Structure probing data (DMS and 2A3) for a 177-nucleotide construct.
[RMDB]
RNA sequence: GGGAACGACUCGAGUAGAGUCGAAAAGAUAUGGACGGUGCCUUGGGAGAACUCUCCUCGGAAACGAGGAACGUGAGUUCGACGAUCAAGCACCGUCCUAAGUCAAAGGUGCGUGUUCGCACGCACCCAUUGGAAAAUCCUUCGGGAUUUUCCAAUGAAAAGAAACAACAACAACAAC
Reactivity to DMS in 0.01 (KOAc 150mM, MgCl2 10mM, bicine 150mM(pH8.5), 24C), signal-to-noise 5, nucleotides 027 to 126: g000a040u000a300u020g010g000a010c010g000g020u000g000c190c060u000u000g010g000g010a090g010a010a010c000u000c010u000c000c000u010c000g020g000a130a090a240c010g000a010g000g020a110a060c300g020u000g010a030g010u000u000c000g010a110c210g000a040u010c020a010a040g010c000a010c010c000g010u000c010c000u000a010a100g000u000c030a100a100a130g010g020u000g000c010g050u000g000u010u010c230g020c010a000c000g010c000a000c000c000
Reactivity to 2A3 in 0.01 (KOAc 150mM, MgCl2 10mM, bicine 150mM(pH8.5), 24C), signal-to-noise 3, nucleotides 027 to 126: g010a030u060a030u180g000g000a000c000g030g000u010g040c090c120u020u010g030g010g000a140g030a020a000c000u010c000u010c020c000u000c010g010g040a060a050a020c000g000a010g060g020a080a070c220g300u240g040a000g000u010u000c000g020a070c000g040a060u040c010a000a020g020c000a000c000c010g010u010c000c000u000a000a000g000u010c030a080a030a130g000g010u000g020c010g000u020g060u070u120c300g030c130a000c010g000c000a020c000c000
Source: RMDB library TTRDES, as collected in RNAgym.
For DMS the reverse transcriptase was MarathonRT.
For 2A3 the reverse transcriptase was SuperScript II with manganese.
The reactions ran in a buffer of 150 mM KOAc, 10 mM MgCl2 and 150 mM bicine (pH 8.5), at 24 C.